An RNA of 177 nucleotides, treated with DMS and read out base by base. Conditions: 150 mM KOAc, 10 mM MgCl2 and 150 mM bicine (pH 8.5), 24 C.
RNA sequence: GGGAACGACUCGAGUAGAGUCGAAAAGAUAUGGACGUACACUGGAGUUGGUAUCGGAAACGAUAUCCAACGUUGAAAGUGACGUCCUAAGUCAAAAGGAGGGAGACGGUUCGCCGUCUCCCUCCAACUCCAUAUAAGUCUUCGGACUUAUAUGGAGAAAAGAAACAACAACAACAAC
Reactivity to DMS in 0.01 (KOAc 150mM, MgCl2 10mM, bicine 150mM(pH8.5), 24C), signal-to-noise 2, nucleotides 027 to 126: g000a020u000a190u020g000g000a040c000g020u000a100c010a000c000u010g000g000a130g020u000u000g000g000u000a000u000c010g000g010a030a020a050c000g010a020u000a000u050c050c000a000a010c010g020u000u010g000a120a160a030g010u010g000a000c000g010u000c000c000u010a000a070g000u000c020a120a090a150a140g000g010a020g020g000g010a050g000a030c000g000g000u010u020c290g020c000c000g000u000c000u000c020c000c000u010c000c000a010a050
Description: Values are in units of 0.01, from 0 to 300, in steps of 10.